[RMDB]
RNA sequence: GGGAACGACUCGAGUAGAGUCGAAAAGAAUGUAUGUAAAGAAAGCGGCACACACUGGCUGCCCAGAAAUAAAACUGGGACAACAGGUCAAAUGGACGCAAGCCAAAUCCUUUGCAUAAGAAAGAAACCUGAUUAUUAGGUUCGCCUAAUAAUCAGGAAAAGAAACAACAACAACAAC
Reactivity to DMS in 0.01 (KOAc 150mM, MgCl2 10mM, bicine 150mM(pH8.5), 24C), signal-to-noise 4, nucleotides 027 to 126: g000a090a080u100g030u010a000u000g000u010a030a000a010g000a030a060a070g010c300g000g000c030a120c120a080c080a100c060u000g000g010c110u000g020c000c000c000a000g000a050a090a150u020a070a080a110a060c010u000g000g040g020a110c060a080a060c160a050g000g000u000c060a030a090a180u020g000g000a060c110g020c100a100a050g010c000c000a040a300a200u020c010c010u000u020u000g010c000a020u000a010a050g000a040a050a080g000a080a110a110
Reactivity to 2A3 in 0.01 (KOAc 150mM, MgCl2 10mM, bicine 150mM(pH8.5), 24C), signal-to-noise 6, nucleotides 027 to 126: g080a060a040u180g010u070a000u010g000u010a030a000a010g020a010a060a010g050c020g020g000c030a020c000a000c000a000c120u010g010g010c050u030g000c010c000c000a020g080a050a130a020u300a040a060a030a040c010u000g000g000g030a030c010a070a020c020a090g010g050u050c030a030a050a100u110g060g020a020c090g020c180a080a020g020c010c000a010a030a060u060c000c000u000u010u010g000c000a010u030a020a030g130a030a090a010g070a060a040a010